An RNA of 207 nucleotides, treated with 2A3 and read out base by base. The reactions ran in a buffer of 150 mM KOAc, 10 mM MgCl2 and 150 mM bicine (pH 8.5), at 24 C.
RNA sequence: GGGAACGACUCGAGUAGAGUCGAAAAGAGUAACCGCUGGGUAUGUCCCGCUCGAACAGAGCAACAGCCACUGAAGCGCGCACGGUGGACAUGCUCUUCCCGAGCGAACCAUACCUGUGCUGAAGCGCGCACGGCAACCGAAAGGUGCGAUAUAAAAGUCUUUGUUUUUGUUCGCAAAAACAAAGACAAAAGAAACAACAACAACAAC
Reactivity to 2A3 in 0.01 (KOAc 150mM, MgCl2 10mM, bicine 150mM(pH8.5), 24C), signal-to-noise 2, nucleotides 027 to 156: g070a010g030u080a070a080c060c010g010c010u020g000g000g000u000a000u020g040u090c100c090c030g000c000u010c010g050a070a040c090a120g000a010g020c080a080a130c100a110g060c000c010a010c010u020g050a220a040g000c000g000c000g040c010a020c040g000g010u010g010g040a040c110a200u300g000c010u000c000u020u040c070c080c010g000a000g000c020g000a010a010c020c000a010u020a000c000c000u010g010u010g000c010u030g020a110a060g010c000g000c000g000c010a010c020g020g020c010a010a020c010c000g030a090a040a010g040g000u010g010c010g030a000u020a010u090a220a090a030a050
2A3 adducts were read by reverse transcription with SuperScript II with manganese.